[RMDB]
RNA sequence: GGGAACGACUCGAGUAGAGUCGAAAAUCUUUUUUAACAUUAAUUUGUCCUUUUCAGUCAGUGCAAAAGUCGAGUAAAAGGCAUAACCUAUCACUGUCAUAGGUAAGAGCUUAGAUCAGGUGAUUGCCCGUGGAAGAUUAUUCGUAAUCUUCCACGGAAAAGAAACAACAACAACAAC
Reactivity to DMS in 0.01 (KOAc 150mM, MgCl2 10mM, bicine 150mM(pH8.5), 24C), signal-to-noise 1, nucleotides 027 to 126: u000c000u000u000u000u000u000u000a040a100c030a020u010u010a080a100u010u010u040g010u000c050c040u000u010u010u000c070a120g030u020c040a080g020u000g010c140a090a040a130a090g000u000c090g000a080g000u010a010a060a040a000g000g000c010a050u000a050a090c030c030u010a010u000c040a110c150u010g000u010c140a050u000a010g010g010u020a100a110g000a070g000c060u000u000a030g010a040u010c030a020g030g000u000g000a070u000u000g000c150
Reactivity to 2A3 in 0.01 (KOAc 150mM, MgCl2 10mM, bicine 150mM(pH8.5), 24C), signal-to-noise 2, nucleotides 027 to 126: u100c000u040u040u070u000u130u220a130a030c040a070u160u110a180a230u110u150u040g090u110c000c030u000u050u010u020c000a020g010u040c010a030g090u010g160c030a000a100a110a080g050u040c040g090a030g130u170a040a000a010a000g000g000c010a010u050a010a030c000c010u010a010u070c040a030c250u050g060u170c030a030u010a010g010g000u020a060a070g150a030g020c010u020u040a020g000a050u050c030a060g000g040u040g030a090u020u120g000c040